This 177-nucleotide RNA was probed chemically with DMS and 2A3. Conditions: 150 mM KOAc, 10 mM MgCl2 and 150 mM bicine (pH 8.5), 24 C. For DMS, 4,036 sequencing reads were counted. Source: RMDB library TTRDEL, as collected in RNAgym.
[RMDB]
RNA sequence: GGGAACGACUCGAGUAGAGUCGAAAAGAUAUGGAGCACCUCAGGGAGCUGCGUCGGAAACGACCAGCUUUGAUCUGAGGGUGCUCCUAAGUCAAAAGUGCGAUUACGGUUCGCCGUAAUCGCACAAUCAAGGCUAAGAGUUCGCUCUUAGCCUUGAAAAAGAAACAACAACAACAAC
Reactivity to DMS in 0.01 (KOAc 150mM, MgCl2 10mM, bicine 150mM(pH8.5), 24C), signal-to-noise 3, nucleotides 027 to 126: g010a030u000a300u000g000g000a020g010c000a030c010c000u000c000a020g010g000g000a000g000c000u000g010c300g000u000c000g010g010a060a070a120c000g000a010c000c000a000g010c000u000u000u000g010a080u010c010u000g000a020g000g010g020u000g010c000u000c000c000u000a010a050g000u010c020a090a080a100a170g010u000g010c010g000a010u010u000a000c010g000g000u000u020c250g020c000c020g030u000a000a000u000c010g010c000a000c000a020a070
Reactivity to 2A3 in 0.01 (KOAc 150mM, MgCl2 10mM, bicine 150mM(pH8.5), 24C), signal-to-noise 1, nucleotides 027 to 126: g020a000u050a020u130g000g010a000g000c000a000c000c000u010c020a000g050g090g020a020g000c020u020g030c050g180u000c000g000g000a030a060a050c000g010a000c000c000a020g000c030u020u020u020g040a040u000c010u000g000a050g070g000g020u000g010c000u020c000c000u020a020a010g030u010c010a000a020a000a230g010u010g010c000g020a000u000u000a010c000g060g070u020u110c300g020c130c020g000u020a000a000u000c000g020c000a010c000a000a010